An RNA of 207 nucleotides, treated with 2A3 and DMS and read out base by base.

[RMDB]
RNA sequence: GGGAACGACUCGAGUAGAGUCGAAAAGGGCAAAGUCACGACGGUUGUGUUGGCGCAACUCGUCGGCUGCCUCGGAGCUAACCCCGCAACCAUCGUCGAGACCGUCAGGGCAUCGGCGAGAUGACCGAUCAGAUUCUCGUGACCCGCGACGAGGCCGGUCACUUAUAUCAUUCGUGAUAUAAGUGACAAAAGAAACAACAACAACAAC
Reactivity to 2A3 in 0.01 (KOAc 150mM, MgCl2 10mM, bicine 150mM(pH8.5), 24C), signal-to-noise 6, nucleotides 027 to 156: g030g000g020c090a110a090a030g030u140c090a030c140g020a000c010g000g000u020u000g020u010g080u160u300g120g050c090g010c060a010a050c040u100c100g020u000c010g000g010c000u020g000c000c000u010c030g000g010a040g010c060u090a080a110c000c000c000c000g040c030a030a030c010c030a100u040c010g010u010c010g000a010g030a100c030c020g080u220c150a110g000g030g020c100a080u020c010g030g000c050g010a010g000a010u080g060a050c030c060g030a040u110c040a050g020a120u120u000c030u010c020g020u020g050a070c000c000c030g030c030g000a010c000g010a040g010g000c030c020g040
Reactivity to DMS in 0.01 (KOAc 150mM, MgCl2 10mM, bicine 150mM(pH8.5), 24C), signal-to-noise 2, nucleotides 027 to 156: g000g010g040c020a070a110a130g010u000c020a130c000g020a050c040g030g010u000u000g030u010g000u000u010g020g030c100g030c010a020a040c020u010c020g040u010c020g000g020c050u010g010c040c010u000c000g000g020a140g030c090u010a130a130c010c010c010c020g030c030a080a070c030c030a150u000c050g010u010c010g020a080g000a050c050c010g000u000c210a200g030g020g000c000a070u000c020g030g030c040g000a070g010a080u000g010a160c090c030g000a110u000c070a140g000a130u000u000c030u000c030g040u010g000a090c010c040c020g010c040g000a060c020g000a090g030g020c010c080g000